An RNA of 177 nucleotides, treated with 2A3 and DMS and read out base by base. The data come from the RNA Mapping Database (RMDB), library RFM100. The RNA was probed in 150 mM KOAc, 10 mM MgCl2 and 150 mM bicine (pH 8.5) at 24 C.

RNA sequence: GGGAACGACUCGAGUAGAGUCGAAAAACGCACGGUACGCCGUGCGAAUGCACUUUUAUACAGGUGCCUACAGAUGCAAAUCCGACGUGAUUUCAAUCACGGCCCGGUCAGGGCUUUGGGAUUGCAAAAUUUCAUGCCGAUUCGUCGGCAUGAAAUUAAAAGAAACAACAACAACAAC
Reactivity to 2A3 in 0.01 (KOAc 150mM, MgCl2 10mM, bicine 150mM(pH8.5), 24C), signal-to-noise 3, nucleotides 027 to 126: a000c020g000c010a010c000g000g010u070a030c240g050c020c000g000u000g000c010g000a000a010u040g000c000a000c000u030u020u050u110a180u080a110c170a050g010g010u000g000c000c010u140a090c050a020g140a170u080g000c050a070a060a200u000c000c000g000a010c010g000u000g000a020u010u160u300c100a150a080u000c000a010c000g010g000c000c000c000g120g090u170c040a050g000g000g000c000u120u120u080g010g000g000a020u000u000g010c000a100a080
Reactivity to DMS in 0.01 (KOAc 150mM, MgCl2 10mM, bicine 150mM(pH8.5), 24C), signal-to-noise 2, nucleotides 027 to 126: a190c000g000c000a000c000g000g000u040a090c140g050c000c000g000u000g020c000g000a040a050u010g020c010a010c020u020u030u030u060a060u050a110c300a030g010g000u020g000c000c130u000a110c170a110g000a130u010g020c000a040a090a040u000c000c000g000a180c060g000u000g010a030u000u010u040c220a110a080u000c000a000c000g000g050c000c000c010g010g010u060c250a150g000g000g000c020u000u000u040g010g000g000a020u000u000g040c000a020a050